[RMDB]
RNA sequence: GGGAACGACUCGAGUAGAGUCGAAAAGUCCAUACUUAGCACAAUGACUAAUCGCCAGUACCAUCAGAAAAUGCUUAAGUCCAUGGCUGCAACUCGUGGAGCGACUUGCGUCAUUGGUACUACAAAGAAAGAUCCUCGUUCGCGAGGAUCAAAAGAAACAACAACAACAAC
Reactivity to 2A3 in 0.01 (KOAc 150mM, MgCl2 10mM, bicine 150mM(pH8.5), 24C), signal-to-noise 8, nucleotides 027 to 129: g030u000c020c000a020u060a100c040u110u110a020g000c030a030c020a090a110u080g040a020c020u040a070a060u060c040g000c020c010a010g000u010a040c010c010a020u110c010a000g130a070a100a010a040u090g040c000u120u090a080a000g020u000c010c000a010u020g010g020c060u160g030c030a030a010c000u000c020g030u110g170g110a100g080c010g020a020c000u020u030g010c010g020u010c000a000u040u140g000g000u040a020c010u020a010c060a010a060a000g110a000a070a000
Reactivity to DMS in 0.01 (KOAc 150mM, MgCl2 10mM, bicine 150mM(pH8.5), 24C), signal-to-noise 4, nucleotides 027 to 129: g000u000c020c060a110u030a080c150u030u050a030g000c050a100c080a070a010u020g000a120c040u030a080a040u050c130g020c020c020a060g030u010a040c020c020a090u020c160a120g020a090a040a060a050u080g040c060u040u060a000a080g000u020c020c020a040u000g010g020c010u060g040c000a000a000c040u000c050g070u060g060g020a130g060c040g040a020c030u040u000g010c000g000u000c000a070u050u020g000g000u060a020c020u000a050c140a040a060a050g040a070a080a130
Source: RMDB library 15KLIB, as collected in RNAgym. An RNA of 170 nucleotides, treated with 2A3 and DMS and read out base by base. DMS adducts were read by reverse transcription with MarathonRT. The DMS profile rests on 11,856 reads.